[RMDB]
RNA sequence: GGGAACGACUCGAGUAGAGUCGAAAAAGGUCGGUCAACCGCAUCGCUACCGAGCCCAGGCACCACACGGCGAUGAGCAGCAAGCCGUUUCGGGACGCUGCCCGCCACACGGCUUUGUCGAUCGGUGCAAUCGUCCCUGAUUCGUCAGGGACGAUUGAAAAGAAACAACAACAACAAC
Reactivity to DMS in 0.01 (KOAc 150mM, MgCl2 10mM, bicine 150mM(pH8.5), 24C), signal-to-noise 4, nucleotides 027 to 126: a070g000g000u000c030g010g000u000c130a130a090c080c090g000c100a060u010c020g020c060u000a040c040c010g000a100g010c010c010c050a110g000g000c040a040c040c050a110c220a130c170g000g010c010g000a090u000g000a120g010c050a000g020c060a150a300g010c010c010g000u010u010u020c120g030g010g000a140c250g010c040u000g020c000c010c010g000c040c060a080c190a060c110g000g000c060u000u010u000g020u000c020g000a050u010c030g020g000u000g000
Reactivity to 2A3 in 0.01 (KOAc 150mM, MgCl2 10mM, bicine 150mM(pH8.5), 24C), signal-to-noise 3, nucleotides 027 to 126: a000g050g010u060c030g020g030u070c050a040a060c140c020g000c080a050u040c030g020c040u020a020c010c020g030a010g020c000c000c000a020g100g060c060a050c060c000a050c010a020c160g000g000c030g060a080u100g040a040g070c020a000g000c010a120a130g130c030c030g040u110u290u300c070g060g010g000a020c080g010c050u030g000c000c000c000g000c020c000a010c000a000c000g000g050c030u060u100u150g030u040c020g030a100u060c060g020g020u020g010

Chemical mapping of a 177-nucleotide RNA with DMS and 2A3.
Conditions: 150 mM KOAc, 10 mM MgCl2 and 150 mM bicine (pH 8.5), 24 C.
The 2A3 profile rests on 3,340 reads.
As a SHAPE reagent, 2A3 marks flexible, mostly unpaired nucleotides at the ribose 2'-OH.
For 2A3 the reverse transcriptase was SuperScript II with manganese.
Source: RMDB library OK2TRN, as collected in RNAgym.